[RMDB]
RNA sequence: GGGAACGACUCGAGUAGAGUCGAAAAGCAACGCAAAGCCGCGGCAAGUGGAGUUAGCGAGAAGAGACUAGGCUUUGGUUUCUUCAAGUGAAACGGUCACCAAUCAGGUGUGGUAGUUACCGUAAAAAUAACCGCUCUUUGUUCGCAAAGAGCGGAACAAUAGCGUAAGGUUCGCCUUACGCUAUUGAAAAGAAACAACAACAACAAC
Reactivity to DMS in 0.01 (KOAc 150mM, MgCl2 10mM, bicine 150mM(pH8.5), 24C), signal-to-noise 3, nucleotides 027 to 156: g020c010a040a070c040g020c030a030a040a170g010c010c030g000c030g020g000c040a050a060g010u010g010g010a110g010u000u000a300g020c090g020a300g000a050a030g010a070g030a020c010u000a060g040g040c140u010u000u010g040g030u000u000u000c000u000u000c040a060a300g030u010g000a090a120a060c030g010g000u000c030a050c040c020a050a090u010c100a090g040g020u000g030u000g010g010u000a060g020u010u000a050c010c030g000u000a010a040a080a080a090u000a090a170c000c010g030c010u010c010u020u000u000g020u000u000c260g030c020a000a010a030g010a030g020c010g000g000a000a020
Reactivity to 2A3 in 0.01 (KOAc 150mM, MgCl2 10mM, bicine 150mM(pH8.5), 24C), signal-to-noise 6, nucleotides 027 to 156: g020c020a040a050c050g010c090a070a050a040g020c020c020g030c050g030g040c090a120a060g020u070g060g050a070g030u090u120a030g050c020g030a040g020a060a010g020a000g010a010c020u050a050g060g140c000u100u110u100g010g000u010u010u000c000u020u020c040a070a010g020u060g080a130a060a010c010g020g030u030c010a010c010c010a020a100u160c050a070g010g130u090g000u020g120g030u050a050g030u060u090a030c020c010g030u070a050a050a020a020a020u140a070a060c000c000g000c010u010c000u040u010u010g030u050u130c150g010c130a010a000a000g010a010g000c000g000g000a000a000